[RMDB]
RNA sequence: GGGAACGACUCGAGUAGAGUCGAAAACAUGUUACUUAAAAAGGAGCCACUUCUCUAUGUGCCCAUCCGGCUGGCUGGACACACUAGACACCUCCCAGGUCCUCGUGUGUACCUGGUUGAGAGGCUCGGUAAUGUAAGAGUUCGCUCUUACAUUACCAAAAGAAACAACAACAACAAC
Reactivity to 2A3 in 0.01 (KOAc 150mM, MgCl2 10mM, bicine 150mM(pH8.5), 24C), signal-to-noise 4, nucleotides 027 to 126: c030a030u140g040u160u150a130c060u130u170a060a080a050a040a060g180g000a010g010c020c000a040c050u200u070c020u020c000u030a020u030g010u010g000c010c010c000a010u000c010c030g300g060c270u230g030g000c010u000g000g000a000c010a000c010a020c030u020a010g000a010c040a030c050c000u000c000c010c000a000g010g010u030c010c010u060c070g160u170g030u020g000u120a010c000c000u000g000g000u050u080g010a040g010a030g010g000c000u020c020
Reactivity to DMS in 0.01 (KOAc 150mM, MgCl2 10mM, bicine 150mM(pH8.5), 24C), signal-to-noise 5, nucleotides 027 to 126: c100a090u010g010u010u010a090c080u010u010a040a070a060a140a100g010g000a010g010c000c010a160c190u000u010c080u000c010u000a040u010g010u000g000c000c010c010a010u000c010c010g020g020c210u020g010g010c110u000g000g000a020c010a010c010a010c250u000a010g000a020c120a080c180c010u000c010c000c000a010g000g010u010c030c020u000c300g010u010g000u010g020u000a020c000c000u000g010g010u000u010g000a020g000a070g010g010c020u000c020